Structure probing data (2A3) for a 207-nucleotide construct. It was measured as part of the RMDB library RSTRND. The 2A3 profile rests on 941 reads. Reactivities are given for positions 27 through 156.
RNA sequence: GGGAACGACUCGAGUAGAGUCGAAAACAAGGUGCAUGCCGAGGUGAGGUUGGCCUCGUAAAAAAGCCUCAAAAAAAAAUAAUUGCAAACGACUCGCAAUACGAAUCUGCUGUGUUAGCAGCUUAAUCAGCCUAAUAAACUGAAGAUUCCCUCUCUCCGUGAAGUAAUACUUCGGUAUUACUUCACGAAAAGAAACAACAACAACAAC
Reactivity to 2A3 in 0.01 (KOAc 150mM, MgCl2 10mM, bicine 150mM(pH8.5), 24C), signal-to-noise 1, nucleotides 027 to 156: c040a020a070g060g000u070g010c030a020u050g040c060c010g020a000g010g000u040g030a040g000g030u060u050g050g010c010c000u010c030g050u140a080a040a000a000a000a040g000c030c000u040c070a100a150a080a010a000a000a090a000a060u100a060a040u090u060g040c020a060a110a080c080g050a020c050u070c090g000c000a050a070u060a100c060g030a020a020u000c010u010g000c010u000g010u000g020u070u020a010g040c010a020g000c030u060u080a070a060u070c030a020g010c040c000u050a100a070u100a040a070a010c000u010g010a030a000g020a110u020u040c010c050c020u040c000u020c000u000c060

The reactions ran in a buffer of 150 mM KOAc, 10 mM MgCl2 and 150 mM bicine (pH 8.5), at 24 C.